Conditions: 150 mM KOAc, 10 mM MgCl2 and 150 mM bicine (pH 8.5), 24 C. This 177-nucleotide RNA was probed chemically with DMS and 2A3. The 2A3 profile rests on 1,146 reads.

RNA sequence: GGGAACGACUCGAGUAGAGUCGAAAAGGCGCGGUCUAUAUCCUCCAACGGCUCUCUACGCAGAUCUUCACCUUCCUGCAGAUGGGCCAGCAGAUCUUUCAGGCGAUUGGGACGAUCAAAGACGCGAAGUACGGUGAGCUUUCGAGCUCACCGUACUAAAAGAAACAACAACAACAAC
Reactivity to DMS in 0.01 (KOAc 150mM, MgCl2 10mM, bicine 150mM(pH8.5), 24C), signal-to-noise 1, nucleotides 027 to 126: g090g030c000g000c000g000g000u030c060u000a180u060a160u000c010c000u040c090c010a030a150c090g000g000c000u010c000u000c020u000a150c080g000c000a030g000a020u020c140u000u040c150a130c170c000u100u020c060c010u000g000c160a100g000a070u000g000g010g050c000c000a070g000c140a080g000a010u040c020u000u120u000c100a080g000g000c040g000a110u040u020g010g000g000a090c170g040a080u030c160a040a150a000g020a140c130g020c010g000a100
Reactivity to 2A3 in 0.01 (KOAc 150mM, MgCl2 10mM, bicine 150mM(pH8.5), 24C), signal-to-noise 2, nucleotides 027 to 126: g070g020c030g030c020g080g060u040c040u040a160u060a050u080c000c020u010c000c040a030a120c060g000g020c000u000c000u000c000u040a080c080g000c060a000g000a200u030c110u110u050c060a190c030c040u010u040c000c020u010g000c000a020g030a070u170g010g020g000c000c000a000g000c000a000g010a040u030c000u020u040u030c050a080g000g060c030g090a120u080u100g030g030g020a040c030g050a000u090c030a040a080a000g030a020c000g030c000g020a040
Description
2A3 adducts were read by reverse transcription with SuperScript II with manganese.